[RMDB]
RNA sequence: GGGAACGACUCGAGUAGAGUCGAAAAUCGGCGCUAUCCACGGAAUCAGUUUCGAUCUCUUGUAGCCUUCUUUCCAAAUUGUCCUCAAAUUCAGAAUCCGAAUAAUCAUAUGAGUCGGGCAAUUCCGCCCAUGAUCGCACUUCGGUGCGAUCAUGGGAAAAGAAACAACAACAACAAC
Reactivity to 2A3 in 0.01 (KOAc 150mM, MgCl2 10mM, bicine 150mM(pH8.5), 24C), signal-to-noise 2, nucleotides 027 to 126: u050c000g070g000c010g040c060u030a020u010c000c000a000c060g030g050a030a010u010c000a110g010u000u040u070c050g020a010u080c040u040c000u020u020g000u170a000g000c010c010u000u120c000u000u070u040c090c010a000a110a250u060u080g000u020c000c000u200c080a160a130a000u180u080c000a000g100a050a050u000c060c000g120a100a150u180a150a070u100c020a010u100a010u300g040a040g110u070c140g010g000g000c040a060a040u070u020c040c070g010

This 177-nucleotide RNA was probed chemically with 2A3. The 2A3 profile rests on 602 reads.